[RMDB]
RNA sequence: GGGAACGACUCGAGUAGAGUCGAAAAGAUAUGGACGUACACUAGCUUUUGACGCUCGUAUAUCGGAAACGAUAUACCGAGCGAUAAGCUAUGUACGUCCUAAGUCAAAGGGCAUCUUCGGAUGCCCCACCGUGGAAACGUUCGCGUUUCCACGGUGAAAAGAAACAACAACAACAAC
Reactivity to 2A3 in 0.01 (KOAc 150mM, MgCl2 10mM, bicine 150mM(pH8.5), 24C), signal-to-noise 2, nucleotides 027 to 126: g040a020u060a050u170g020g010a000c020g020u010a010c040a060c150u030a010g020c030u040u220u150u300g300a130c040g000c000u000c020g000u000a000u000a000u000c000g010g010a020a080a020c030g010a000u010a000u010a010c120c110g010a010g010c000g010a010u020a000a000g000c000u010a010u000g000u030a000c000g000u000c000c000u000a000a000g000u000c010a090a050a080g000g000g020c010a010u000c000u050u150c300g140g010a000u010g000c000c020c000
Reactivity to DMS in 0.01 (KOAc 150mM, MgCl2 10mM, bicine 150mM(pH8.5), 24C), signal-to-noise 2, nucleotides 027 to 126: g000a050u010a300u000g020g000a010c010g040u000a000c000a060c300u000a000g000c000u000u000u000u000g010a200c060g000c010u000c000g000u010a010u000a000u010c000g030g010a090a110a150c010g010a010u010a000u000a000c100c100g020a000g010c000g030a040u000a010a010g020c010u010a010u000g000u050a010c000g010u000c000c000u010a000a060g010u000c030a100a170a110g000g000g000c000a000u000c000u000u040c210g020g000a010u000g010c000c000c000
Chemical mapping of a 177-nucleotide RNA with 2A3 and DMS. The 2A3 profile rests on 5,193 reads. The reactions ran in a buffer of 150 mM KOAc, 10 mM MgCl2 and 150 mM bicine (pH 8.5), at 24 C. DMS adducts were read by reverse transcription with MarathonRT.